[RMDB]
RNA sequence: GGGAACGACUCGAGUAGAGUCGAAAAUCGGAGGAACGAAAGGGAACGAAACAGGGUCAAGUUGGUCAACAUGGGUUUCGCAACACUCAGGGAACACGUCCCAAACGGCGUCAAGAACAAGAAGAUGCCGAUUUCACAGGUUCGCCUGUGAAAUCGGAAAAGAAACAACAACAACAAC
Reactivity to DMS in 0.01 (KOAc 150mM, MgCl2 10mM, bicine 150mM(pH8.5), 24C), signal-to-noise 1, nucleotides 027 to 126: u030c060g000g030a070g020g020a040a120c030g000a000a140a130g020g030g040a050a150c050g030a110a150a140c100a090g060g000g020u000c040a140a040g010u000u010g000g020u000c060a100a130c070a020u000g000g030g010u000u000u010c140g030c080a070a090c230a000c020u000c020a030g000g000g020a070a100c130a040c100g000u000c000c020c000a140a080a220c080g000g030c020g000u000c060a050a080g000a020a110c300a000a160g000a110a090g000a040u000g010
An RNA of 177 nucleotides, treated with DMS and read out base by base. Reactivities are given for positions 27 through 126. DMS (dimethyl sulfate) methylates the pairing face of unpaired adenines and cytosines. For DMS the reverse transcriptase was MarathonRT. Conditions: 150 mM KOAc, 10 mM MgCl2 and 150 mM bicine (pH 8.5), 24 C.